[RMDB]
RNA sequence: GGGAACGACUCGAGUAGAGUCGAAAAGAUAUGGACAUCCCACUCUUUUGACGCGAACUUCGGAAACGAAUUCGCGAUAAGAGUGGAUGUCCUAAGUCAAAGACCGUCAAGUUCGCUUGACGGUCAACAGAAUAAAUGAGUUCGCUCAUUUAUUCUGAAAAGAAACAACAACAACAAC
Reactivity to DMS in 0.01 (KOAc 150mM, MgCl2 10mM, bicine 150mM(pH8.5), 24C), signal-to-noise 9, nucleotides 027 to 126: g000a030u000a270u000g000g000a010c000a000u000c160c050c080a010c000u000c000u000u000u010u010g010a190c040g000c000g000a010a010c300u000u000c000g010g000a070a040a110c000g010a020a080u000u000c000g020c000g010a050u000a020a040g000a020g020u000g000g000a000u000g010u000c000c000u000a010a050g000u000c020a100a110a130g010a010c000c000g010u000c000a010a010g000u000u010c240g010c010u000u000g010a010c000g010g000u000c000a010a050
Reactivity to 2A3 in 0.01 (KOAc 150mM, MgCl2 10mM, bicine 150mM(pH8.5), 24C), signal-to-noise 8, nucleotides 027 to 126: g000a010u040a020u070g000g000a000c000a000u080c060c090c010a040c010u030c020u080u300u210u300g170a060c020g000c000g010a070a110c180u020u010c010g000g010a030a030a020c010g000a010a010u010u000c010g000c010g000a000u060a090a050g000a000g000u000g010g000a000u000g000u010c000c000u000a010a000g000u000c020a090a060a090g010a000c000c000g010u000c000a000a010g000u030u210c270g030c220u010u000g000a000c010g000g000u000c000a000a000